[RMDB]
RNA sequence: GGGAACGACUCGAGUAGAGUCGAAAAACAGUCAGUACGCUGACUGAGGGAAACGGGAGCCGGGCUUGGGACAAGAGCCAUCCCAAGUCCAAGGCCAAGUAGGCUCUAGUGAUGGUACGCCAUCACACUCAAUGCCGUGUUUCGACACGGCAUUGAGAAAAGAAACAACAACAACAAC
Reactivity to 2A3 in 0.01 (KOAc 150mM, MgCl2 10mM, bicine 150mM(pH8.5), 24C), signal-to-noise 5, nucleotides 027 to 126: a000c010a000g010u000c000a000g020u060a060c220g010c110u000g000a000c000u010g010a100g020g070g020a090a120a050c070g010g020g030a030g020c020c030g010g000g010c010u000u000g000g010g010a000c020a090a050g000a010g020c010c000a020u010c010c000c000a000a000g010u000c020c000a080a020g030g000c030c000a060a020g070u140a100g080g000c010u000c000u010a030g000u000g010a000u000g000g010u030a020c280g020c020c000a000u010c000a000c010a000
Reactivity to DMS in 0.01 (KOAc 150mM, MgCl2 10mM, bicine 150mM(pH8.5), 24C), signal-to-noise 2, nucleotides 027 to 126: a270c020a030g000u000c080a000g000u000a110c300g030c000u000g030a000c000u020g000a060g000g070g010a030a010a040c080g000g000g010a150g000c010c020g000g010g000c000u050u000g000g040g050a050c000a030a020g050a010g030c080c020a300u000c000c000c000a020a070g000u020c000c000a070a030g010g010c030c110a150a150g000u000a170g010g010c000u000c020u000a140g010u000g000a000u000g080g020u030a150c290g040c000c000a010u000c000a010c040a090

Structure probing data (2A3 and DMS) for a 177-nucleotide construct.
The data come from the RNA Mapping Database (RMDB), libraries RFM100 and RFMREP.
The RNA was probed in 150 mM KOAc, 10 mM MgCl2 and 150 mM bicine (pH 8.5) at 24 C.